The record gives the reactivity of an RNA of 207 nucleotides to DMS and 2A3. For 2A3, 7,319 sequencing reads were counted.

RNA sequence: GGGAACGACUCGAGUAGAGUCGAAAAAUACGAUUGCUAACAUCCAACCUACACCUGAGCCAAUGCCAUAAACAACACUUUCGCCAAAGGUAAGGUUUUUCGCAACCAUAAAGGAUACCGCACCAAAGAUGGCACAGUUAACGGUAAUUAAAGGUAGCAUAUACACAUCCUUCGGGAUGUGUAUAUGAAAAGAAACAACAACAACAAC
Reactivity to DMS in 0.01 (KOAc 150mM, MgCl2 10mM, bicine 150mM(pH8.5), 24C), signal-to-noise 4, nucleotides 027 to 156: a120u000a070c080g010a100u010u010g020c010u000a090a080c060a120u000c060c040a060a090c030c020u000a080c040a060c030c020u000g000a150g010c040c040a070a090u000g020c010c010a120u000a100a080a120c060a060a040c050a060c040u000u010u000c060g020c050c020a040a130a110g010g010u000a060a090g020g000u000u000u000u000u000c100g000c040a040a060c010c010a130u000a060a090a110g040g000a150u000a060c020c000g040c070a080c070c010a050a070a130g010a110u000g020g030c030a050c060a090g010u000u000a040a080c050g010g010u000a050a090u000u000a020a070a070g010g010u010a080g020
Reactivity to 2A3 in 0.01 (KOAc 150mM, MgCl2 10mM, bicine 150mM(pH8.5), 24C), signal-to-noise 8, nucleotides 027 to 156: a000u170a030c090g090a090u060u130g040c050u060a060a040c020a070u040c040c020a050a060c020c010u040a050c040a020c040c020u040g040a030g050c020c020a050a040u070g000c010c020a050u150a100a150a030c050a050a040c030a050c080u080u150u170c080g030c040c040a100a050a050g000g000u040a050a080g040g010u040u000u010u070u110c050g010c050a060a060c020c020a070u160a110a100a020g020g000a010u030a040c010c030g040c040a020c020c040a040a090a060g110a070u060g010g010c020a010c010a050g010u040u070a090a030c050g020g020u030a060a090u090u090a090a060a020g070g020u050a030g020